Record summary:
Chemical mapping of a 177-nucleotide RNA with DMS. Source: RMDB library M2PK90, as collected in RNAgym. For DMS the reverse transcriptase was MarathonRT.
[RMDB]
RNA sequence: GGGAACGACUCGAGUAGAGUCGAAAAUAAAAGAGCGUACGACUCACAAAGACUGUAGGACAGUCUGACUCUCUCGUACGCUUGUUCAACGAGAGAGAGAGUGCGUUGGAACAAGUGUGAAAAAAAACACAUCCGAUAGCUUCGGCUAUCGGAUGUGAAAAGAAACAACAACAACAAC
Reactivity to DMS in 0.01 (KOAc 150mM, MgCl2 10mM, bicine 150mM(pH8.5), 24C), signal-to-noise 1, nucleotides 027 to 126: u010a100a020a100a070g000a050g000c050g020u000a010c000g010a060c030u030c040a070c130a070a240a030g000a030c000u000g000u000a110g000g060a300c020a000g000u000c000u000g020a100c010u000c000u000c020u000c000g000u000a080c090g000c040u000u000g000u000u010c080a040a080c100g000a000g000a030g020a050g060a020g000a080g000u000g000c050g000u000u010g030g000a070a010c100a050a160g000u000g000u020g030a000a000a000a120a000a080a080a140